RNA sequence: GGGAACGACUCGAGUAGAGUCGAAAAGACCGUGGGUUCGCCCACGGUCAAAUCCCACGAUGCGGCGCAUCGAGCCAACAAUCCGACGGUGGGUCCGAACAAAAAGAGCGGUGUUCGCACCGCUCAACAAUUUAAUCGACUUCGGUCGAUUAAAUUGAAAAGAAACAACAACAACAAC
Reactivity to 2A3 in 0.01 (KOAc 150mM, MgCl2 10mM, bicine 150mM(pH8.5), 24C), signal-to-noise 1, nucleotides 027 to 126: g010a000c010c010g000u050g000g030g020u090u050c160g080c000c000c000a000c000g000g020u020c000a000a000a000u010c000c010c020a000c000g020a020u160g020c110g050g010c070g020c130a060u050c010g020a070g070c020c000a060a050c050a130a160u160c130c030g020a040c020g020g000u030g010g050g040u050c030c010g000a040a050c020a040a180a030a020a010g000a010g000c000g020g020u020g020u000u010c120g000c010a010c000c040g060c000u000c000a000a020
Reactivity to DMS in 0.01 (KOAc 150mM, MgCl2 10mM, bicine 150mM(pH8.5), 24C), signal-to-noise 2, nucleotides 027 to 126: g000a020c000c010g090u020g000g030g000u000u030c230g010c010c000c000a020c000g000g000u010c000a000a080a090u000c010c000c000a180c120g000a050u000g020c030g000g000c090g020c020a040u000c000g010a110g010c060c030a110a090c110a120a150u000c080c080g020a090c080g010g020u000g000g000g010u000c050c000g000a090a070c150a060a060a050a110a070g000a030g000c000g010g000u000g010u000u000c160g010c000a010c000c000g020c010u000c000a010a030